[RMDB]
RNA sequence: GGGAACGACUCGAGUAGAGUCGAAAAGCCGAACAGACCGAUAAAAGGGGCUGCCGAACCGAUGGUGGCGAGAAAGCCAAGGCGCGAUUCCAGCUUGCCGCUUUCACGCGCCAACGCCACAUCCAUACGUCCCAUACUAGUUCGCUAGUAUGGGACGAAAAGAAACAACAACAACAAC
Reactivity to 2A3 in 0.01 (KOAc 150mM, MgCl2 10mM, bicine 150mM(pH8.5), 24C), signal-to-noise 2, nucleotides 027 to 126: g030c000c010g000a010a000c020a020g060a040c000c010g080a090u150a220a130a060a050g090g030g000g000c010u030g000c020c050g020a100a060c030c040g010a020u040g040g080u000g060g000c010g010a100g030a050a050a000g030c050c050a060a100g030g000c000g000c030g000a050u260u050c050c010a020g040c010u050u080g020c070c050g020c050u040u050u060c050a010c010g010c000g000c010c010a000a010c020g000c030c000a030c010a030u000c040c010a060u100a200
Reactivity to DMS in 0.01 (KOAc 150mM, MgCl2 10mM, bicine 150mM(pH8.5), 24C), signal-to-noise 3, nucleotides 027 to 126: g000c090c010g010a100a250c080a080g010a090c020c020g020a100u010a020a070a120a210g020g010g020g030c010u000g010c070c060g000a070a160c150c110g010a020u000g000g030u000g010g010c010g000a120g000a050a020a070g030c070c180a120a160g000g040c040g000c110g030a150u010u000c040c100a180g000c020u000u010g000c190c190g000c020u000u000u000c120a070c050g020c020g010c020c010a080a090c070g010c000c020a070c060a050u000c030c110a110u000a140